RNA sequence: GGGAACGACUCGAGUAGAGUCGAAAAGUGAGUAGUUCGCUACUCACAAACGAUUAUUAAAACGAGUAUCUCAUGCAAUUGCCCGAACCCACUCGGGCUUUUUAAAACCCAACCGUUCGCGGUUGGGCAUUUAGAUUGGCUUCGGCCAAUCUAAAUGAAAAGAAACAACAACAACAAC
Reactivity to DMS in 0.01 (KOAc 150mM, MgCl2 10mM, bicine 150mM(pH8.5), 24C), signal-to-noise 1, nucleotides 027 to 126: g000u000g000a020g010u000a000g040u000u030c220g080c020u000a000c000u000c000a000c000a020a100a280c050g000a010u000u000a070u010u020a020a090a090a160c030g000a010g010u000a100u000c000u010c050a080u000g010c300a050a100u010u010g010c000c000c000g000a060a190c090c060c080a050c250u000c010g020g000g000c010u010u020u040u000u010a010a030a050a180c000c000c000a000a000c000c010g030u010u000c210g050c000g020g030u000u000g020g020g020